RNA sequence: GGGAACGACUCGAGUAGAGUCGAAAAAAGUUCACCAACUCGGCUUCGGCGUGGUUGCUUGACGGAUAGACGGACAGACCUGCGCUCGUGCCCGCGAGCCCGGUCACGACAUGUUUGUUGGUGAUGAAGAUUGGCAACAAUUCGUUGUUGCCAAUCUAAAAGAAACAACAACAACAAC
Reactivity to DMS in 0.01 (KOAc 150mM, MgCl2 10mM, bicine 150mM(pH8.5), 24C), signal-to-noise 1, nucleotides 027 to 126: a050a090g000u000u000c020a050c060c020a050a080c030u000c130g010g000c010u000u010c080g010g040c070g000u000g030g020u000u000g010c060u020u000g020a190c060g000g000a120u000a040g010a070c070g000g010a050c090a100g000a010c020c020u000g010c150g010c020u010c010g000u000g000c020c000c030g020c010g000a020g020c000c040c250g010g010u000c000a060c100g020a040c120a120u000g000u010u010u000g020u010u000g000g040u000g010a060u020g030a130